RNA sequence: GGGAACGACUCGAGUAGAGUCGAAAACGUCCCCGUCGUACAGAAUGGUAACAUAUCUCUCCAAAUAUCUGAGCUUGGGUAUACGGGGAAACCCAACCCCUUGGGAAGAUUGGGUAUAUGGCUAGAUUACAUCGAUUGUACUUCGGUACAAUCGAAAUCAAGCAAGUAUGUUCGCAUACUUGCUUGAAAAAGAAACAACAACAACAAC
Reactivity to DMS in 0.01 (KOAc 150mM, MgCl2 10mM, bicine 150mM(pH8.5), 24C), signal-to-noise 3, nucleotides 027 to 156: c040g000u000c000c010c010c040g020u010c050g010u000a200c080a110g000a160a100u000g020g000u010a110a230c050a090u000a050u000c050u000c010u010c020c010a050a130a160u010a030u000c040u020g000a280g010c060u000u010g010g000g040u000a120u010a070c120g030g030g030g000a070a100a100c010c010c010a060a070c050c000c020c060u000u010g000g030g010a130a030g020a090u000u010g010g010g040u000a100u000a040u010g010g020c060u000a060g000a130u000u010a100c100a170u000c010g020a030u000u000g020u020a020c020u000u020c300g030g010u000a000c000a000a020u010c000g020a010a030a090
Reactivity to 2A3 in 0.01 (KOAc 150mM, MgCl2 10mM, bicine 150mM(pH8.5), 24C), signal-to-noise 5, nucleotides 027 to 156: c040g110u040c000c010c000c020g180u120c030g020u050a090c060a150g140a180a140u130g050g020u110a180a020c010a030u080a050u020c070u010c020u010c090c020a090a160a130u180a080u040c020u030g020a010g090c010u030u030g030g000g000u020a020u000a060c030g010g010g000g000a010a050a030c000c000c000a000a040c000c000c000c000u010u030g040g000g020a040a010g020a060u040u030g020g000g000u020a010u000a010u030g030g000c030u060a050g000a150u100u120a080c050a120u030c020g000a000u000u000g000u000a000c000u020u060c210g060g000u000a000c000a000a000u000c000g000a000a000a000